Background
The record gives the reactivity of an RNA of 170 nucleotides to 2A3 and DMS. The RNA was probed in 150 mM KOAc, 10 mM MgCl2 and 150 mM bicine (pH 8.5) at 24 C. For 2A3, 5,994 sequencing reads were counted. 2A3 adducts were read by reverse transcription with SuperScript II with manganese. Values cover nucleotides 27 to 129. For DMS, 10,381 sequencing reads were counted. It was measured as part of the RMDB library 15KLIB.
RNA sequence: GGGAACGACUCGAGUAGAGUCGAAAAUCCGGAGGUCCCUCUCGAGCUCCUCCUUUCUUCUUCUUGCAUCGAUCCACUUUCCGAGUUGCUCUUCUCUCCCCCUCCGGGGUCUCCUCGAAUCGGGCUGUACGCGGGUGAUUCGUCACCCGCAAAAGAAACAACAACAACAAC
Reactivity to 2A3 in 0.01 (KOAc 150mM, MgCl2 10mM, bicine 150mM(pH8.5), 24C), signal-to-noise 2, nucleotides 027 to 129: u030c000c000g000g030a030g000g050u060c040c000c010u030c000u020c030g020a000g020c040u070c010c000u040c000c010u020u060u000c000u060u010c020u050u000c030u040u040g000c010a010u050c030g090a050u010c010c000a030c060u040u100u010c050c020g050a070g020u050u050g040c000u010c000u050u040c030u000c000u020c010c010c000c010c000u020c000c010g000g000g000g000u010c000u000c010c000u040c000g030a030a020u050c000g040g010g000c030u060g040u070a030c040
Reactivity to DMS in 0.01 (KOAc 150mM, MgCl2 10mM, bicine 150mM(pH8.5), 24C), signal-to-noise 3, nucleotides 027 to 129: u040c010c010g050g030a000g010g020u020c060c040c050u050c050u020c060g020a140g010c090u000c020c030u020c040c020u010u000u040c020u020u030c030u000u020c040u020u080g050c050a150u000c110g020a060u040c040c090a120c050u000u010u030c000c000g000a000g050u000u000g010c040u000c050u010u060c030u000c030u020c040c030c080c010c040u000c060c010g080g020g010g010u010c030u010c010c010u020c040g020a020a050u020c040g060g070g000c010u030g040u000a060c110